An RNA of 177 nucleotides, treated with 2A3 and DMS and read out base by base. 2A3 is a SHAPE reagent: it acylates the 2'-hydroxyl of flexible nucleotides of all four kinds. The DMS profile rests on 8,233 reads. The RNA was probed in 150 mM KOAc, 10 mM MgCl2 and 150 mM bicine (pH 8.5) at 24 C.
RNA sequence: GGGAACGACUCGAGUAGAGUCGAAAAUGGCGGUUUUGUGCGCCAGUGGGGCCUCGAUAAUUCGCUGACGCUGGAACAUUAUGCGCGCGCCUUCUCCGUCUCAUGGACCGAUGGCGGGCUGGCCUGAGGUCAUUAAUGACUUCGGUCAUUAAUGACCAAAAGAAACAACAACAACAAC
Reactivity to 2A3 in 0.01 (KOAc 150mM, MgCl2 10mM, bicine 150mM(pH8.5), 24C), signal-to-noise 3, nucleotides 027 to 126: u070g010g000c010g020g040u030u040u080u140g130u130g020c020g010c010c010a020g000u030g020g030g010g030c050c050u080c060g020a070u110a280a080u170u080c030g000c030u040g020a060c010g000c030u030g030g010a040a020c020a060u140u240a070u300g090c080g000c020g000c000g020c020c000u040u010c070u020c020c000g030u030c020u010c060a120u180g060g050a090c050c030g050a060u080g010g000c010g020g060g000c040u030g050g020c000c010u050g030a040
Reactivity to DMS in 0.01 (KOAc 150mM, MgCl2 10mM, bicine 150mM(pH8.5), 24C), signal-to-noise 5, nucleotides 027 to 126: u000g000g010c030g010g010u000u000u010u000g000u000g020c100g020c020c020a030g030u000g010g000g010g010c080c060u010c090g010a090u010a060a110u010u000c070g020c020u000g010a070c060g010c020u000g010g010a070a080c080a080u010u010a060u000g010c060g020c040g010c070g010c010c010u000u000c020u000c060c060g000u000c050u010c120a120u000g000g000a080c090c090g000a060u010g000g000c010g010g000g020c040u010g020g020c010c050u000g000a160